[RMDB]
RNA sequence: GGGAACGACUCGAGUAGAGUCGAAAACAAGCAGGACGCGAACAAGAAGAAGCCGAAGGAACUUCAGGUCGCCGCGCACGAACUGGCGCUCGAUCUCCGUCUCGCUCGAGUAGGUUUCCCCGGGGAUCCCUCUUCGAGCCCUUGCCACCAUACAGGUCCACCUAGUUAUCUUCGGAUAACUAGGUGGAAAAGAAACAACAACAACAAC
Reactivity to 2A3 in 0.01 (KOAc 150mM, MgCl2 10mM, bicine 150mM(pH8.5), 24C), signal-to-noise 1, nucleotides 027 to 156: c070a070a020g000c010a040g050g180a010c060g040c060g110a020a040c070a190a000g160a030a030g010a070a000g010c020c040g070a030a080g000g060a070a090c080u130u070c020a050g020g000u050c000g050c160c030g000c000g000c000a220c150g200a280a050c200u230g080g030c000g000c000u010c000g050a020u010c060u010c070c030g010u090c000u000c000g000c000u000c010g010a000g010u040a050g070g140u020u050u080c020c000c000c030g000g000g020g000a020u060c010c020c020u010c000u130u140c070g000a020g040c090c000c000u080u060g040c020c000a060c010c000a010u110a250c040a080g100g040u030